Chemical mapping of a 207-nucleotide RNA with 2A3 and DMS. DMS adducts were read by reverse transcription with MarathonRT. For DMS, 2,240 sequencing reads were counted. The RNA was probed in 150 mM KOAc, 10 mM MgCl2 and 150 mM bicine (pH 8.5) at 24 C. For 2A3 the reverse transcriptase was SuperScript II with manganese.
[RMDB]
RNA sequence: GGGAACGACUCGAGUAGAGUCGAAAAGGCUGCUGCCGGAGCCGAUACCGGAAUACGAGACCUAAUGUGCGGUCGAAUGCACUGAAGUACGAAAGUACGAAGAGGUCACACCGAGGACCGAGACUCGAUAUGCUCGCUAGAUGGAGCUUUACAUCAAGCCUGAUUAAUACUUCGGUAUUAAUCAGGCAAAAGAAACAACAACAACAAC
Reactivity to 2A3 in 0.01 (KOAc 150mM, MgCl2 10mM, bicine 150mM(pH8.5), 24C), signal-to-noise 3, nucleotides 027 to 156: g030g000c010u040g000c030u010g010c070c000g020g000a020g000c000c120g040a060u100a040c010c030g010g050a070a040u110a090c070g020a010g010a120c010c000u050a070a020u110g020u020g010c010g000g030u060c050g020a020a050u120g020c060a000c000u050g020a070a000g020u020a010c010g030a100a020a020g000u000a000c050g020a040a030g130a020g030g000u030c030a010c020a010c020c060g020a090g010g060a040c040c010g060a050g020a050c020u000c020g030a070u060a050u270g020c040u020c040g020c030u050a050g010a070u080g050g000a010g010c000u040u090u050a070c020a050u060c040a070a000
Reactivity to DMS in 0.01 (KOAc 150mM, MgCl2 10mM, bicine 150mM(pH8.5), 24C), signal-to-noise 2, nucleotides 027 to 156: g010g060c040u000g050c020u000g000c020c040g050g000a110g000c000c010g000a150u000a020c010c020g030g030a120a080u010a100c040g000a130g040a090c060c000u050a050a090u010g010u000g020c000g030g000u000c150g000a100a200u000g030c030a020c080u010g000a150a200g050u000a000c000g010a190a110a290g010u000a030c000g010a120a090g020a120g040g010u000c030a050c090a120c030c000g000a090g000g000a090c010c050g000a180g000a140c040u030c020g020a090u010a050u010g010c010u000c040g080c050u010a100g020a180u010g030g000a060g000c070u000u010u010a040c030a080u010c040a070a300